[RMDB]
RNA sequence: GGGAACGACUCGAGUAGAGUCGAAAAAGAUCCACGCUACGGCGUGGAUCACACGUUCAUCCCUAUUGGGACGGAAGUAGGCAUAGUGCCGAAGGAACGCAUUAGUCAUGCGCUACGGCGCAUGAUACACAUCAGAGUCACUUCGGUGACUCUGAAACAUAAGGAAGGCGUUCGCGCCUUCCUUAUGAAAAGAAACAACAACAACAAC
Reactivity to DMS in 0.01 (KOAc 150mM, MgCl2 10mM, bicine 150mM(pH8.5), 24C), signal-to-noise 1, nucleotides 027 to 156: a050g020a000u000c000c000a000c040g040c000u010a120c260g090g000c000g030u010g020g010a000u000c010a010c070a000c000g010u000u010c030a140u000c000c000c000u000a080u030u030g040g030g020a000c000g030g020a040a090g030u000a170g010g000c120a230u000a090g000u000g000c010c040g020a170a130g000g010a120a080c050g000c030a030u000u000a110g010u010c020a020u000g000c030g040c000u000a110c200g050g000c010g000c000a020u000g000a040u000a080c040a060c050a090u010c000a000g000a090g000u000c000a010c010u000u020c300g060g000u010g000a020c000u000c010u030g000a020a030a080
Reactivity to 2A3 in 0.01 (KOAc 150mM, MgCl2 10mM, bicine 150mM(pH8.5), 24C), signal-to-noise 3, nucleotides 027 to 156: a000g000a000u020c000c010a010c020g010c000u040a040c260g110g020c000g000u000g000g010a000u010c000a010c000a000c010g000u010u030c010a020u020c010c000c010u120a300u130u300g000g000g000a010c020g000g030a000a010g010u010a010g020g010c030a080u120a210g130u210g200c000c010g000a000a010g070g030a010a000c010g010c040a100u070u090a090g020u020c000a000u000g020c000g000c000u030a060c210g080g000c010g000c000a000u000g000a000u020a020c030a000c010a080u030c000a000g000a000g000u010c000a010c000u040u100c220g170g000u010g000a000c000u010c000u000g000a000a010a000